[RMDB]
RNA sequence: GGGAACGACUCGAGUAGAGUCGAAAACUGUGCGUUCGCGCACAGAAUACUCCGUAGGAAGCGAAUAGAGCUUGGAUUUAUGGGAUAGGUUCGAAAGAGUAAUCCCAUUGUCAGCUCUACGCUUCCUAAACGGCGCAACCACGCUUUCGAGCGUGAAUAUCCCAGACUAGUUCGCUAGUCUGGGAUAAAAAGAAACAACAACAACAAC
Reactivity to 2A3 in 0.01 (KOAc 150mM, MgCl2 10mM, bicine 150mM(pH8.5), 24C), signal-to-noise 3, nucleotides 027 to 156: c000u000g010u000g030c000g020u020u060c250g000c000g000c140a010c000a000g000a040a030u080a050c070u030c030c000g010u000a000g000g000a000a000g010c010g040a140a190u030a030g010a010g000c060u090u210g150g030a080u210u300u120a010u050g000g030g010a010u010a130g280g120u100u080c040g070a120a070a050g020a010g020u070a040a050u000c000c010c030a020u000u000g020u010c010a000g000c000u000c000u000a000c010g000c000u010u000c000c000u000a010a000a000c000g010g000c080g000c080a060a020c020c000a000c000g000c010u100u150u200c240g150a020g030c030g000u040g010a010a050
Reactivity to DMS in 0.01 (KOAc 150mM, MgCl2 10mM, bicine 150mM(pH8.5), 24C), signal-to-noise 2, nucleotides 027 to 156: c000u020g020u010g040c000g060u010u010c280g040c000g000c010a010c010a000g010a080a110u000a060c040u010c000c020g040u020a060g000g020a040a020g040c000g080a100a270u010a040g000a030g040c010u010u010g030g000a120u000u000u000a030u010g020g000g010a080u000a150g020g020u010u010c010g010a190a150a250g000a060g020u030a220a070u020c000c000c010a050u000u000g000u010c010a080g010c010u000c020u000a030c020g030c000u010u000c020c000u000a010a020a100c000g020g030c100g000c080a060a070c090c000a040c000g040c000u020u000u000c250g020a070g040c030g010u010g000a070a180
Structure probing data (2A3 and DMS) for a 207-nucleotide construct.
2A3 adducts were read by reverse transcription with SuperScript II with manganese.
The DMS profile rests on 2,968 reads.